The record gives the reactivity of an RNA of 207 nucleotides to DMS and 2A3. 2A3 adducts were read by reverse transcription with SuperScript II with manganese. The 2A3 profile rests on 1,960 reads. DMS adducts were read by reverse transcription with MarathonRT. Source: RMDB library M2RFPK, as collected in RNAgym.
RNA sequence: GGGAACGACUCGAGUAGAGUCGAAAAAUACUUCUCAGGAUGGCGCGUUGCAGUCCAACAAGAUCCAGGGACUGUACAGAAUUUUCCUAUACCUCGGGUCGGGUUUGGAAUCUAAGGUUGACUCGCUAAAACUUUACGUGGUUCGCCACGUAAAGAAGAUAACAUGCAUCUUCGGAUGCAUGUUAUCAAAAGAAACAACAACAACAAC
Reactivity to DMS in 0.01 (KOAc 150mM, MgCl2 10mM, bicine 150mM(pH8.5), 24C), signal-to-noise 2, nucleotides 027 to 156: a110u070a070c060u000u000c040u010c000a140g030g020a070u000g000g000c020g030c060g060u010u000g020c040a070g000u000c000c020a070a100c050a170a180g000a050u000c030c020a090g030g030g010a070c070u010g010u000a090c130a150g020a080a180u000u000u000u000c030c040u000a150u000a060c030c000u010c060g030g000g000u000c060g000g000g060u000u000u000g010g000a090a050u000c100u010a120a140g020g020u000u020g010a060c050u000c030g010c040u000a040a140a080a130c000u000u000u010a010c010g070u020g000g020u020u010c300g030c030c000a000c000g020u000a020a000a020g000a060a120
Reactivity to 2A3 in 0.01 (KOAc 150mM, MgCl2 10mM, bicine 150mM(pH8.5), 24C), signal-to-noise 3, nucleotides 027 to 156: a000u130a030c030u050u020c030u000c050a060g130g030a080u080g050g030c010g000c060g100u110u030g000c020a010g010u030c010c010a030a030c020a030a120g060a150u120c040c070a050g010g000g040a000c040u040g020u060a070c030a030g170a120a060u040u060u080u000c000c000u040a070u080a070c000c000u030c020g040g000g000u030c000g000g020g000u020u060u040g030g030a020a020u020c030u100a110a100g120g020u100u140g030a030c010u020c070g000c040u090a120a110a020a040c000u010u000u000a000c000g000u000g030g010u010u030c140g060c070c000a000c000g000u000a000a000a000g000a010a020